[RMDB]
RNA sequence: GGGAACGACUCGAGUAGAGUCGAAAACUCAAGGCCUUCGGGCCUUGAGAAAAGGCAUCGUAUCUUUGCUUCGAAGCCAAACAUGAAACAUGAAUGCAGAGAAAAGUUUUGGGUUCGCCCAAAACAACAAACCUAUAUGGUUCGCCAUAUAGGUUUGAAAAGAAACAACAACAACAAC
Reactivity to DMS in 0.01 (KOAc 150mM, MgCl2 10mM, bicine 150mM(pH8.5), 24C), signal-to-noise 6, nucleotides 027 to 126: c010u000c000a010a010g000g010c000c010u000u010c190g040g020g020c000c000u000u000g000a010g010a010a040a080a110g010g020c020a120u000c040g000u000a060u000c010u000u000u000g010c020u000u010c010g000a080a080g010c000c010a070a100a130c150a090u000g000a110a090a090c140a080u010g000a040a040u000g010c000a020g000a030g000a150a110a090a090g000u000u000u000u000g010g000g010u000u010c220g020c000c000c000a000a000a000a000c010a100a170
Reactivity to 2A3 in 0.01 (KOAc 150mM, MgCl2 10mM, bicine 150mM(pH8.5), 24C), signal-to-noise 6, nucleotides 027 to 126: c000u000c000a010a000g010g000c010c020u130u200c300g060g010g000c020c000u020u000g000a000g000a000a030a000a010g010g000c000a020u040c060g030u080a040u060c030u020u030u030g000c000u030u040c020g030a070a010g000c030c000a060a130a010c110a130u240g130a120a110a020c040a050u150g110a100a030u120g000c010a000g010a000g000a040a040a050a080g000u010u000u000u000g040g000g020u030u070c160g100c000c000c020a000a000a000a000c000a000a010